[RMDB]
RNA sequence: GGGAACGACUCGAGUAGAGUCGAAAAGAUAUGGAAUUGGCGUGACAUGGUUGAAUAUCGGAAACGAUAUACCAACCAACAGCACGCAAUUCCUAAGUCAAAACAACUUAGCUUCGGCUAAGUUGAACAAGAAUAAUGGCUUCGGCCAUUAUUCUUGAAAAGAAACAACAACAACAAC
Reactivity to DMS in 0.01 (KOAc 150mM, MgCl2 10mM, bicine 150mM(pH8.5), 24C), signal-to-noise 3, nucleotides 027 to 126: g000a010u000a090u000g000g020a040a000u000u000g030g020c010g010u010g000a020c070a300u010g010g010u000u000g010a140a040u000a000u000c000g040g000a040a030a080c000g010a010u000a010u010a110c300c000a000a000c010c000a080a050c170a170g000c000a000c000g000c010a000a000u000u000c010c000u000a010a080g000u020c010a080a080a130a240c020a010a010c010u000u000a010g010c000u000u020c300g040g020c000u000a000a000g010u000u000g000a080a130
Reactivity to 2A3 in 0.01 (KOAc 150mM, MgCl2 10mM, bicine 150mM(pH8.5), 24C), signal-to-noise 4, nucleotides 027 to 126: g010a000u010a020u070g000g030a000a020u040u030g300g110c010g000u000g010a120c190a300u300g020g020u020u000g030a050a010u010a010u000c010g000g010a040a010a000c020g010a010u020a000u030a170c200c020a000a010c000c010a040a040c090a030g000c000a010c010g000c000a000a010u000u000c000c000u020a010a000g000u000c030a000a090a090a120c010a000a000c000u000u000a000g010c000u070u050c300g120g010c000u020a010a000g000u000u010g000a050a030
An RNA of 177 nucleotides, treated with DMS and 2A3 and read out base by base.
Conditions: 150 mM KOAc, 10 mM MgCl2 and 150 mM bicine (pH 8.5), 24 C.
It was measured as part of the RMDB library TTRDES.